[RMDB]
Structure probing data (DMS and 2A3) for a 177-nucleotide construct. The RNA was probed in 150 mM KOAc, 10 mM MgCl2 and 150 mM bicine (pH 8.5) at 24 C.
RNA sequence: GGGAACGACUCGAGUAGAGUCGAAAAAAAGGAGACAAUCUGUCUCUUGUGUCUCAGGAAACCACAAAAUCAGCCUUUCCUUUUUCUCUGUCACCUUACAAGUCUUGCCUCCUGCUUGGCCUGAGGAGUCCACUAGAGAGUUCGCUCUCUAGUGGACAAAAGAAACAACAACAACAAC
Reactivity to DMS in 0.01 (KOAc 150mM, MgCl2 10mM, bicine 150mM(pH8.5), 24C), signal-to-noise 2, nucleotides 027 to 126: a050a080a030g020g010a040g000a020c010a160a160u020c220u010g000u000c000u000c010u000u020g020u000g020u000c010u000c040a080g010g010a110a100a060c070c030a000c140a030a030a090a090u000c040a060g000c040c010u000u010u000c010c000u010u000u000u010u010c040u000c030u000g000u020c060a050c030c050u010u000a090c120a080a080g000u000c020u010u000g000c040c020u010c050c020u000g020c030u000u010g000g010c050c010u010g030a100g000g020a200
Reactivity to 2A3 in 0.01 (KOAc 150mM, MgCl2 10mM, bicine 150mM(pH8.5), 24C), signal-to-noise 1, nucleotides 027 to 126: a010a010a000g080g020a010g000a040c050a060a300u170c090u210g020u030c000u010c000u050u000g040u000g000u000c020u000c030a010g090g070a060a040a070c020c010a060c040a070a130a000a060u080c020a010g010c030c000u000u060u020c050c000u020u060u020u110u010c060u050c000u040g090u070c030a040c040c010u040u160a060c060a200a070g030u010c050u060u080g090c000c010u000c000c000u030g000c020u080u040g060g010c000c000u010g030a020g030g000a060